[RMDB]
Structure probing data (DMS) for a 177-nucleotide construct. DMS adducts were read by reverse transcription with MarathonRT. For DMS, 1,769 sequencing reads were counted.
RNA sequence: GGGAACGACUCGAGUAGAGUCGAAAAGAUAUGGAAGCAACCACGAGCUCUAUGACAGCUUUGAUCGUACGGUCGGAAACGACCGUUACGGGAGCUGGAGUAGAGCUCGUGGUUGCUUCCUAAGUCAGAUAGACGAUAUGUUCGCAUAUCGUCUAUCAAAAGAAACAACAACAACAAC
Reactivity to DMS in 0.01 (KOAc 150mM, MgCl2 10mM, bicine 150mM(pH8.5), 24C), signal-to-noise 2, nucleotides 027 to 126: g000a060u000a300u010g000g000a000a020g000c000a010a000c000c000a000c000g000a060g040c000u010c020u010a010u020g000a300c030a010g010c000u010u000u000g000a120u010c000g010u000a030c020g000g010u000c010g020g020a140a120a280c000g000a000c000c000g000u010u000a010c010g010g010g000a020g040c010u000g010g020a300g010u000a000g010a000g000c000u000c000g000u000g000g020u000u000g010c010u000u000c000c000u000a000a010g020u010c060a130